[RMDB]
RNA sequence: GGGAACGACUCGAGUAGAGUCGAAAAGAUAUGGAGACGCAGGCUUUUGACGUCGGUUACUCGGAAACGAGUAACACGACGAUAAGCCUGGUCUCCUAAGUCAAAGCGAAACCUUCGGGUUUCGCAACCUAGGCAUUAUCUUCGGAUAAUGCCUAGGAAAAGAAACAACAACAACAAC
Reactivity to 2A3 in 0.01 (KOAc 150mM, MgCl2 10mM, bicine 150mM(pH8.5), 24C), signal-to-noise 5, nucleotides 027 to 126: g030a000u030a020u110g040g000a000g010a010c090g060c300a000g020g040c070u120u170u300u300g300a290c170g010u000c000g020g000u000u000a000c000u000c010g000g010a040a030a020c000g000a010g020u000a000a020c040a000c040g010a000c020g030a060u090a110a010g000c000c000u000g010g000u000c000u010c000c000u010a000a000g000u000c040a080a090a040g010c000g000a000a010a010c010c000u080u120c300g070g020g000u000u000u010c000g000c000a010a000
Reactivity to DMS in 0.01 (KOAc 150mM, MgCl2 10mM, bicine 150mM(pH8.5), 24C), signal-to-noise 3, nucleotides 027 to 126: g000a010u000a120u020g000g000a030g000a020c010g030c010a010g010g010c000u000u000u000u020g010a190c080g030u010c000g000g000u000u000a010c000u000c010g020g010a020a040a060c020g010a010g000u000a010a000c010a060c010g020a010c000g010a040u010a010a030g020c000c000u000g000g000u000c000u000c000c000u000a000a060g010u010c000a150a150a180g000c000g010a010a000a010c000c000u000u010c270g020g020g020u000u000u000c000g020c000a020a020